Background
This 207-nucleotide RNA was probed chemically with 2A3 and DMS. Source: RMDB library OK3TST, as collected in RNAgym. 2A3 adducts were read by reverse transcription with SuperScript II with manganese. The DMS profile rests on 3,091 reads. Reactivities are rounded to 0.1 and cut off at 0 and 3.
RNA sequence: GGGAACGACUCGAGUAGAGUCGAAAAACACGCCGUGGCGUGCAGCGCAUUUUGCUAGGACGCGAUCCUAAAACGGAGAUGGGGACAGGUGCGAUUCCUGGAGAAUGUAUUGAGGGCGUGACCUGGGCGCGUGGCGUGCCUGAACUGGUCGAUACGGCCAUGUAAGUCCGUUCGCGGACUUACAUGGAAAAGAAACAACAACAACAAC
Reactivity to 2A3 in 0.01 (KOAc 150mM, MgCl2 10mM, bicine 150mM(pH8.5), 24C), signal-to-noise 3, nucleotides 027 to 156: a000c030a010c030g000c000c000g070u090g090g000c010g040u070g050c010a030g070c030g000c030a030u090u030u030u270g150c010u020a020g010g000a010c010g060c040g100a210u100c030c010u110a110a060a020a000c080g120g000a100g070a090u110g010g000g010g000a030c030a030g020g000u030g050c030g040a060u100u070c000c000u010g020g000a020g010a030a020u070g030u120a130u140u190g070a080g000g050g010c070g030u070g060a000c000c000u010g010g050g000c000g000c010g040u070g000g020c010g010u020g030c010c000u030g000a060a050c060u070g020g010u050c010g000a020u020a170c010g020g020
Reactivity to DMS in 0.01 (KOAc 150mM, MgCl2 10mM, bicine 150mM(pH8.5), 24C), signal-to-noise 2, nucleotides 027 to 156: a080c020a010c050g080c020c070g020u020g070g020c020g040u000g030c030a090g020c080g000c000a100u000u000u000u000g020c020u010a180g000g020a050c030g020c020g010a150u000c030c010u000a040a130a130a160c040g020g000a100g040a180u010g000g020g020g030a160c080a080g020g010u010g010c060g000a300u000u010c000c030u000g030g010a110g040a050a050u000g000u000a150u000u010g050a120g000g020g020c000g010u000g010a110c030c010u000g000g000g010c010g030c070g050u010g040g030c060g060u000g020c000c010u000g010a120a070c090u010g010g010u000c020g000a170u010a090c060g010g000